[RMDB]
RNA sequence: GGGAACGACUCGAGUAGAGUCGAAAAGAAUCGACUUCGGUCGAUUCACAGAAGCUACGGCUUCUGAACGCACACUACGGUGUGCGAAGCAACCGUACGCGGUUGCAGAGUAACGUACGCGUUACUCAAGGAGGUACUUCGGUACCUCCACCUUCGGCGGUGACGCCGAAGGCGGUCACGCACAGGGCAAACCAUUCGAAAGAGUGGGACGCAAAGCCUCCGGCCUAAACCAUUGCACUCCGGUAGGUAGCGGGGUUACCGAUGGUAGUGAGAGGUUCGCCUCUCACAAAAGAAACAACAACAACAAC
Reactivity to DMS in 0.01 (KOAc 150mM, MgCl2 10mM, bicine 150mM(pH8.5), 24C), signal-to-noise 2, nucleotides 027 to 266: g000a030a000u010c000g010a020c010u000u010c190g000g010u000c000g000a010u000u000c010a210c030a010g000a020a000g000c000u000a120c230g020g000c000u000u000c000u000g000a200a210c010g010c020a020c000a010c000u010a130c170g010g000u000g020u010g020c000g000a060a130g010c010a020a010c000c010g030u000a110c200g040c010g000g000u000u000g000c020a120g010a020g010u010a000a000c010g020u010a120c270g040c020g040u000u000a000c000u000c000a090a100g000g000a010g010g010u000a010c010u000u010c190g000g010u000a010c000c010u000c010c000a010c030c020u000u000c000g010g010c000g010g000u030g000a170c030g080c000c000g010a000a020g000g000c160g000g020u010c040a040c240g000c100a100c260a110g010g010g000c030a080a240a260c010c010a020u020u010c020g000a140a100a130g000a010g030u000g000g000g000a090c190g010c050a100a120a190g010c000c020u000c070c010g010g000c040c040u000a080a160a070c000c010a030u000u010g010c130a070c060u020c030c020g000g010u000a050g020g010u000a070g010c030g000g000g000g000u000u010a020c300c020g010a050u000g000g010u010a110
Reactivity to 2A3 in 0.01 (KOAc 150mM, MgCl2 10mM, bicine 150mM(pH8.5), 24C), signal-to-noise 6, nucleotides 027 to 266: g010a000a000u000c000g000a000c010u050u080c260g050g000u000c000g000a000u010u000c000a000c000a010g010a000a000g000c010u040a020c300g110g000c000u000u000c000u000g020a070a020c020g010c000a010c000a000c010u070a050c300g100g000u000g000u010g000c000g010a080a010g010c000a000a000c000c010g030u060a030c280g030c030g080g000u000u000g000c030a010g000a000g010u000a010a010c010g000u020a020c300g020c000g120u000u000a010c000u010c040a010a110g000g000a000g000g000u010a010c020u060u090c210g090g000u000a000c050c000u000c000c000a010c000c000u000u010c000g010g000c020g000g090u100g040a040c020g000c000c000g000a000a000g000g000c020g040g040u080c050a020c090g070c020a060c030a130g030g060g000c000a010a070a020c000c000a010u020u020c010g050a110a040a040g000a030g010u010g010g010g040a010c030g030c040a060a030a030g010c010c000u020c010c040g030g020c000c010u090a160a110a020c010c010a030u030u120g040c040a030c060u050c040c020g070g100u090a080g080g060u060a040g080c030g010g000g010g000u050u050a040c020c010g030a030u040g020g050u050a070